An RNA of 177 nucleotides, treated with 2A3 and DMS and read out base by base. The RNA was probed in 150 mM KOAc, 10 mM MgCl2 and 150 mM bicine (pH 8.5) at 24 C.
RNA sequence: GGGAACGACUCGAGUAGAGUCGAAAAAGACUUGUAUUCGUACAAGUCUACAGAAAUUUCGCUAGCACACGUUCACACCUAGCGUUCUCAAUAACGAUCGAACAACGUGUCAAUUCGUUGACACGAAAACUUCAUAUCCUUUCGAGGAUAUGAAGUUAAAAGAAACAACAACAACAAC
Reactivity to 2A3 in 0.01 (KOAc 150mM, MgCl2 10mM, bicine 150mM(pH8.5), 24C), signal-to-noise 9, nucleotides 027 to 126: a000g000a000c000u000u000g000u010a020u040u090c220g010u040a000c000a000a000g000u000c000u010a010c010a030g230a050a160a070u030u030u020c010g000c000u010a010g030c080a030c010a010c190g050u080u050c040a050c020a030c090c000u010a000g000c000g000u010u000c010u000c000a030a090u200a090a040c110g090a130u160c100g040a030a020c030a030a040c040g000u000g000u010c000a010a020u030u070c150g060u060u010g010a000c000a000c000g010a030a010
Reactivity to DMS in 0.01 (KOAc 150mM, MgCl2 10mM, bicine 150mM(pH8.5), 24C), signal-to-noise 9, nucleotides 027 to 126: a020g010a010c010u000u000g000u000a010u000u010c180g030u000a010c000a010a010g010u000c000u000a070c220a120g010a090a110a150u000u000u000c010g010c000u000a000g000c130a130c150a100c140g020u000u000c030a090c100a090c210c000u000a010g000c000g010u000u000c000u000c010a120a070u010a040a060c200g010a100u010c150g010a030a030c090a090a250c010g010u000g000u000c000a020a030u000u000c170g010u000u000g010a000c000a000c000g000a010a040
The data come from the RNA Mapping Database (RMDB), library M2PK50.